[RMDB]
RNA sequence: GGGAACGACUCGAGUAGAGUCGAAAAGCAGGUCACGUUGCUAUUGGUUAUCUAUACCAGUCUGCUUGGUUGCCCGGAGCUAUAAAAAAGUCUCCUUCAACGAAGCAUUCAUCUCCAGUGAUUGCUCAAUACUAGAGUGUUUCGACACUCUAGUAUUAAAAGAAACAACAACAACAAC
Reactivity to 2A3 in 0.01 (KOAc 150mM, MgCl2 10mM, bicine 150mM(pH8.5), 24C), signal-to-noise 9, nucleotides 027 to 126: g010c030a020g000g080u030c020a010c060g070u090u080g050c070u110a150u080u070g020g000u080u050a120u180c120u100a100u100a110c010c000a000g010u000c010u000g000c000u010u010g090g010u030u040g040c050c050c010g000g000a010g000c030u040a020u250a150a140a030a030a010a020g050u050c010u000c010c000u030u060c030a050a030c030g110a020a000g000c000a000u010u020c020a080u040c030u000c040c020a030g010u010g020a040u030u080g010c020u030c060
Reactivity to DMS in 0.01 (KOAc 150mM, MgCl2 10mM, bicine 150mM(pH8.5), 24C), signal-to-noise 9, nucleotides 027 to 126: g010c020a040g000g010u010c070a100c070g000u020u000g010c120u010a080u020u000g000g010u000u010a120u030c200u010a100u030a040c020c010a050g010u000c030u000g010c010u000u000g000g010u000u000g000c140c110c160g010g000a020g000c020u000a070u040a000a080a080a110a090a040g000u030c010u000c000c010u010u020c060a050a060c090g000a070a030g010c010a020u000u000c010a140u010c050u020c060c090a100g010u000g000a070u000u000g010c030u000c120